The data come from the RNA Mapping Database (RMDB), library OK2TRN. This 177-nucleotide RNA was probed chemically with DMS and 2A3. The RNA was probed in 150 mM KOAc, 10 mM MgCl2 and 150 mM bicine (pH 8.5) at 24 C. As a SHAPE reagent, 2A3 marks flexible, mostly unpaired nucleotides at the ribose 2'-OH.
[RMDB]
RNA sequence: GGGAACGACUCGAGUAGAGUCGAAAAAAUGCUCUUGGCCCCAACUACAGAAAAGAUCUCAUGGCGUUGAGGAUGAGUCAACAGAAUCAGUAAGUCUGGGUGGGCUUCUUUCCAACGGGACAGAGCAGCAGAUUUAGUAAUUCGUUACUAAAUCUGCAAAAGAAACAACAACAACAAC
Reactivity to DMS in 0.01 (KOAc 150mM, MgCl2 10mM, bicine 150mM(pH8.5), 24C), signal-to-noise 4, nucleotides 027 to 126: a080a070u000g010c000u000c010u000u000g070g010c070c000c000c070a090a120c150u000a100c160a090g000a060a050a070a050g010a070u000c020u000c010a060u010g020g000c080g010u000u000g020a080g000g010a100u010g000a090g010u010c060a050a060c040a050g000a160a070u010c060a060g010u010a120a140g000u010c020u000g000g010g030u000g000g000g000c080u010u000c030u010u000u010c010c030a080a120c200g010g010g000a080c040a030g000a020g020c020a070
Reactivity to 2A3 in 0.01 (KOAc 150mM, MgCl2 10mM, bicine 150mM(pH8.5), 24C), signal-to-noise 3, nucleotides 027 to 126: a000a000u100g000c020u040c040u090u100g070g020c020c000c010c000a000a070c020u170a030c010a040g140a040a050a020a020g080a080u000c040u020c030a090u070g100g030c070g020u040u060g030a060g070g010a060u110g000a020g120u040c020a030a040c020a080g120a090a020u090c010a040g130u180a250a060g030u000c060u020g180g100g100u090g040g080g010c000u050u030c010u020u020u000c030c000a050a050c090g010g000g020a000c010a000g020a010g000c020a000